An RNA of 177 nucleotides, treated with DMS and 2A3 and read out base by base. For DMS the reverse transcriptase was MarathonRT. Source: RMDB library M2PK50, as collected in RNAgym. Conditions: 150 mM KOAc, 10 mM MgCl2 and 150 mM bicine (pH 8.5), 24 C.
RNA sequence: GGGAACGACUCGAGUAGAGUCGAAAAGAGUCCUAUUUCGAUAGGACUCAACUUAAAUCAGCGGUAAAUAAUUAGCUGGCGUUACCGCUGAACGCCAGCAUACUAGCCUCGUCUUCGGACGAGGCAAACGAGAGGGGUAAUUCGUUACCCCUCUCGUAAAAGAAACAACAACAACAAC
Reactivity to DMS in 0.01 (KOAc 150mM, MgCl2 10mM, bicine 150mM(pH8.5), 24C), signal-to-noise 1, nucleotides 027 to 126: g000a030g010u010c000c000u000a000u000u010u010c120g000a010u010a000g000g000a010c000u010c020a020a040c130u000u010a080a060a080u000c000a000g010c010g020g030u000a010a040a020u000a020a050u000u000a130g000c000u000g000g010c020g000u000u010a070c080c000g000c000u000g000a000a050c010g010c000c000a000g020c010a120u010a080c160u000a100g000c000c000u010c000g000u010c000u010u010c190g010g010a000c000g020a010g020g020c000a000a010
Reactivity to 2A3 in 0.01 (KOAc 150mM, MgCl2 10mM, bicine 150mM(pH8.5), 24C), signal-to-noise 2, nucleotides 027 to 126: g010a000g010u000c010c000u000a020u030u080u070c160g060a010u030a010g020g070a000c000u000c000a000a030c000u020u190a010a010a070u030c010a010g030c010g300g200u270a080a090a050u120a060a090u170u170a060g000c010u000g010g000c000g020u000u000a160c020c000g000c010u010g000a000a000c010g010c010c000a010g030c010a010u060a040c070u080a050g010c000c010u000c000g000u000c010u010u040c200g060g000a010c000g000a010g010g010c000a020a010